[RMDB]
The record gives the reactivity of an RNA of 177 nucleotides to DMS and 2A3. The RNA was probed in 150 mM KOAc, 10 mM MgCl2 and 150 mM bicine (pH 8.5) at 24 C. The 2A3 profile rests on 1,004 reads. 2A3 adducts were read by reverse transcription with SuperScript II with manganese.
RNA sequence: GGGAACGACUCGAGUAGAGUCGAAAAAUCACACGAAGAUCGAAUUUAGCACCAUGCUCUUUGAAGCGGUUGCUGACUUUAGAGAGCGUUUGCCUGCUUGGCUCAGCCGCAUAAGCUUCUAAAAUAGCGGCUACUUACUAUUCGUAGUAAGUAGCCGAAAAGAAACAACAACAACAAC
Reactivity to DMS in 0.01 (KOAc 150mM, MgCl2 10mM, bicine 150mM(pH8.5), 24C), signal-to-noise 2, nucleotides 027 to 126: a050u020c040a070c100a130c080g010a070a070g000a110u020c030g010a080a080u000u000u000a040g010c030a050c100c100a060u010g000c030u000c020u000u000u000g000a040a000g000c050g010g010u020u000g020c070u010g000a100c050u000u000u000a050g000a130g000a060g030c030g010u000u010u000g000c060c020u000g020c040u000u020g000g000c030u000c090a030g010c020c060g000c070a050u010a100a100g000c040u000u010c060u000a070a060a150a120u000a110g000
Reactivity to 2A3 in 0.01 (KOAc 150mM, MgCl2 10mM, bicine 150mM(pH8.5), 24C), signal-to-noise 2, nucleotides 027 to 126: a000u050c010a020c000a000c030g060a030a050g020a040u100c040g040a050a080u160u110u040a100g000c020a010c090c020a040u090g000c020u010c020u040u150u150g050a070a000g030c000g060g070u170u180g000c080u050g020a170c010u080u050u040a040g010a020g000a020g060c040g000u040u060u070g030c010c020u060g040c000u060u040g020g000c000u000c080a000g030c000c040g050c060a080u070a140a020g020c000u050u070c090u130a180a200a140a100u170a050g090